[RMDB]
Structure probing data (DMS and 2A3) for a 207-nucleotide construct.
Source: RMDB library OK3TST, as collected in RNAgym.
For DMS the reverse transcriptase was MarathonRT.
Reactivities are given for positions 27 through 156.
RNA sequence: GGGAACGACUCGAGUAGAGUCGAAAAUGUGUCUUUAGAUGAAGAUCUGUCUGCAAAACAGGAAGAGGCUCUAAAUGCUUUGGACAACGCCAUUGGUAGUGCAUCAGCUGCCACAGAAGAAGAAGAAGUUAAUGAUGCACUGUCCUUUAUGACCGAGGAAGCACAUGAGAUUCGUCUCAUGUGCUUCAAAAGAAACAACAACAACAAC
Reactivity to DMS in 0.01 (KOAc 150mM, MgCl2 10mM, bicine 150mM(pH8.5), 24C), signal-to-noise 2, nucleotides 027 to 156: u000g060u010g020u000c010u000u000u000a050g020a070u020g010a070a010g020a100u000c020u000g020u000c020u010g020c060a070a040a120a300c070a100g010g000a140a080g020a120g000g000c020u010c020u010a070a100a080u000g050c030u010u010u040g010g020a100c000a100a110c170g000c060c010a110u000u010g010g030u010a000g050u000g030c030a000u010c020a160g000c080u000g020c070c010a160c080a110g000a060a070g010a170a160g050a150a070g000a020a080g000u010u000a060a180u000g000a060u000g000c010a010c010u000g010u010c010c040u000u000u000a110u000g010a090c000c050g010a250g100
Reactivity to 2A3 in 0.01 (KOAc 150mM, MgCl2 10mM, bicine 150mM(pH8.5), 24C), signal-to-noise 3, nucleotides 027 to 156: u130g050u010g010u020c020u040u120u050a060g030a110u130g040a050a060g040a110u020c000u010g080u010c020u070g090c080a040a040a060a090c020a020g030g030a030a080g030a040g110g000c020u000c040u060a120a160a050u160g040c000u060u040u030g030g010a030c020a110a050c100g040c040c000a050u020u030g040g000u010a000g000u000g000c000a010u010c000a000g040c030u080g030c070c030a080c030a020g210a160a020g070a090a010g050a100a010g030a110a000g020u010u170a140a150u110g000a010u000g010c010a010c010u000g010u090c000c020u110u170u060a120u180g030a030c020c070g000a040g160